[RMDB]
RNA sequence: GGGAACGACUCGAGUAGAGUCGAAAAUGGGAGCAUAGCUCUAAGUGCAGUGGUGUACAAUCCCCUUCCACAGUGUUGUAGAGCAAGUCUGCCUCUGGUUCUAGAGCUGACGAGGACAGCAUCCUAUACCUUCUCUUCUGUUCGCAGAAGAGAAGGUAAAAGAAACAACAACAACAAC
Reactivity to DMS in 0.01 (KOAc 150mM, MgCl2 10mM, bicine 150mM(pH8.5), 24C), signal-to-noise 2, nucleotides 027 to 126: u000g000g010g000a070g040c070a140u010a110g000c000u000c010u010a020a040g030u000g000c030a180g010u000g020g040u040g020u010a050c200a070a070u050c020c020c000c210u010u020c020c000a060c070a170g020u010g040u000u010g000u010a040g000a070g020c130a050a100g010u000c030u000g000c070c000u000c020u030g030g030u030u000c160u040a050g000a020g020c040u000g000a040c030g030a170g020g000a120c070a070g000c110a100u000c020c030u000a170u020
Reactivity to 2A3 in 0.01 (KOAc 150mM, MgCl2 10mM, bicine 150mM(pH8.5), 24C), signal-to-noise 1, nucleotides 027 to 126: u170g010g000g010a000g000c030a110u060a230g000c060u040c000u000a100a000g040u000g090c050a020g030u050g030g020u050g020u010a060c030a100a150u060c060c000c000c000u100u000c000c000a060c010a090g040u090g000u050u080g170u100a000g000a020g000c020a000a070g000u020c020u030g080c000c000u000c000u000g140g000u110u010c030u070a010g020a000g090c000u000g080a090c120g000a050g000g020a000c000a000g050c020a170u000c000c000u060a030u030
Record summary:
Conditions: 150 mM KOAc, 10 mM MgCl2 and 150 mM bicine (pH 8.5), 24 C. Structure probing data (DMS and 2A3) for a 177-nucleotide construct. For 2A3, 593 sequencing reads were counted.